[RMDB]
The record gives the reactivity of an RNA of 177 nucleotides to 2A3 and DMS. For DMS the reverse transcriptase was MarathonRT. The 2A3 profile rests on 3,531 reads.
RNA sequence: GGGAACGACUCGAGUAGAGUCGAAAAGCCGCGAUCGUCCAGGGCAUGGACGAGGCCGUCGUCAACGGCGCCCAGAUCUUCUACUACGACCGCUUCGGGAUCUCCGACUCGUCGCGGCGGACGGCGAGGAGGGAGCAGUGUUCGCACUGCUCCCUCCAAAAGAAACAACAACAACAAC
Reactivity to 2A3 in 0.01 (KOAc 150mM, MgCl2 10mM, bicine 150mM(pH8.5), 24C), signal-to-noise 3, nucleotides 027 to 126: g020c010c010g000c030g040a130u040c010g010u010c000c000a040g160g120g140c160a130u030g010g000a000c010g000a010g040g020c010c010g000u020c030g070u050c030a080a060c050g030g000c000g020c020c000c000a060g030a140u040c080u140u050c060u140a130c020u050a080c090g200a240c030c020g020c040u020u030c020g080g000g060a190u040c080u030c080c040g060a050c010u020c030g030u040c000g000c000g000g010c020g060g000a000c010g020g020c010g010a060
Reactivity to DMS in 0.01 (KOAc 150mM, MgCl2 10mM, bicine 150mM(pH8.5), 24C), signal-to-noise 3, nucleotides 027 to 126: g020c000c000g050c050g000a140u000c010g020u000c000c000a050g000g020g030c220a140u000g020g000a020c020g020a040g040g030c010c020g020u000c030g010u000c120a120a150c020g000g000c010g030c000c000c000a150g000a070u010c090u000u010c070u000a100c060u000a150c050g000a080c050c030g020c030u000u000c030g030g000g000a120u010c070u000c100c150g010a150c020u000c010g060u000c050g010c030g010g020c010g000g000a050c040g020g000c030g010a130